Source: RMDB library M2PK90, as collected in RNAgym. Structure probing data (2A3 and DMS) for a 177-nucleotide construct. 2A3 adducts were read by reverse transcription with SuperScript II with manganese. For DMS, 1,662 sequencing reads were counted.
RNA sequence: GGGAACGACUCGAGUAGAGUCGAAAAGACACCGCGCAGAUCCCAAUGGCGGCUAAUAACGCCAAAAUAAAUGCGCGUAAAUGGCGUAAAAUAUAGACAGAAUAUAAGUGAAAGCCGCCAAAGCAAAGUAGAAAGUUAAUUUCGAUUAACUUUCUACAAAAGAAACAACAACAACAAC
Reactivity to 2A3 in 0.01 (KOAc 150mM, MgCl2 10mM, bicine 150mM(pH8.5), 24C), signal-to-noise 2, nucleotides 027 to 126: g020a010c040a020c070c020g000c010g000c000a020g010a130u050c050c000c000a010a050u060g010g000c000g030g010c010u050a110a060u100a160a000c010g010c000c000a090a140a010a000u100a020a060a020u140g010c030g000c000g000u010a000a020a030u060g000g000c000g000u030a090a060a150a000u170a020u030a040g130a070c090a020g180a170a020u130a030u050a190a000g090u060g060a170a120a040g040c040c010g010c040c000a000a000a000g010c010a050a030a000
Reactivity to DMS in 0.01 (KOAc 150mM, MgCl2 10mM, bicine 150mM(pH8.5), 24C), signal-to-noise 2, nucleotides 027 to 126: g000a180c090a090c170c010g000c030g020c010a180g000a100u000c010c010c020a110a120u000g030g040c000g000g000c020u000a060a070u010a150a020c000g000c020c000a030a050a090a070u000a070a130a050u020g010c020g000c000g020u000a040a150a120u000g000g000c010g010u000a080a080a110a080u000a040u000a060g010a150c170a120g010a130a060u000a040u000a050a170g020u000g010a140a130a120g000c020c000g020c000c000a040a040a040g010c150a060a070a140